RNA sequence: GGGAACGACUCGAGUAGAGUCGAAAAUAUAGUAUGGAGGAGGCUGGAAGUUAGAAGGAGAAUGGAAGGAAGGAGAAGAAGUCCACGUAUUGGCACUGGAGCCUGGAAAAAAUCCAAGAGCCGUAAAUACUUGGUAAAGUUUCGACUUUACCAAGUAAAAAGAAACAACAACAACAAC
Reactivity to DMS in 0.01 (KOAc 150mM, MgCl2 10mM, bicine 150mM(pH8.5), 24C), signal-to-noise 2, nucleotides 027 to 126: u010a080u000a090g010u000a070u010g000g000a120g020g000a030g000g040c090u000g000g020a050a080g000u000u000a050g030a080a090g010g010a040g010a020a070u010g010g030a080a110g010g020a040a090g010g000a070g010a060a070g000a090a120g010u000c040c040a020c140g000u000a050u010u020g020g010c020a090c150u000g000g000a040g000c100c050u000g000g000a010a000a090a050a080a070u010c020c020a060a160g000a070g000c030c030g020u000a020a060a110